[RMDB]
RNA sequence: GGGAACGACUCGAGUAGAGUCGAAAAGUACCAUUAUUUCAGCCUCAAAUGAGCGAACAGCGGUUGGAUCAUUUUCCGCUGGAAGCAGUGCCAUCCCGCGUUCAAUAUCUUCCUCAUCGACACCUUUCAGUGCAAUGCCAACGAUUCUUCCUGCUUCCAUUAUCAACGAUUUCGAUCGUUGAUAAUGAAAAGAAACAACAACAACAAC
Reactivity to DMS in 0.01 (KOAc 150mM, MgCl2 10mM, bicine 150mM(pH8.5), 24C), signal-to-noise 3, nucleotides 027 to 156: g030u010a150c020c020a150u010u000a110u010u010u000c050a110g030c030c010u020c030a050a110a110u000g000a100g040c040g010a080a090c010a140g040c020g030g030u000u000g020g010a160u020c090a110u010u000u000u000c020c060g000c030u000g010g010a050a090g020c070a080g010u000g000c050c020a150u010c030c000c000g010c120g030u000u000c030a070a130u010a080u000c030u010u010c020c010u000c010a080u010c010g020a120c020a040c020c010u010u000u000c060a050g030u000g020c020a080a090u010g020c030c020a060a100c030g010a110u000u000c050u000u010c010c010u000g000c070u000u000c010
Reactivity to 2A3 in 0.01 (KOAc 150mM, MgCl2 10mM, bicine 150mM(pH8.5), 24C), signal-to-noise 9, nucleotides 027 to 156: g030u040a050c030c030a040u090u060a090u070u190u110c070a040g030c020c010u070c040a080a120a150u170g030a060g030c040g040a070a030c010a030g020c010g040g030u050u070g070g060a120u130c060a110u080u120u080u030c020c010g020c040u020g010g010a030a010g000c040a010g020u020g050c020c010a040u050c020c000c000g000c030g030u050u070c060a090a070u060a120u120c040u050u050c010c020u050c020a080u070c040g050a040c010a060c040c010u050u120u090c040a030g030u020g070c030a020a070u070g030c010c020a040a030c060g030a050u090u000c020u050u030c020c010u030g030c030u060u030c030
The data come from the RNA Mapping Database (RMDB), library OK3TST. The record gives the reactivity of an RNA of 207 nucleotides to DMS and 2A3. For DMS, 7,345 sequencing reads were counted. For 2A3, 9,726 sequencing reads were counted.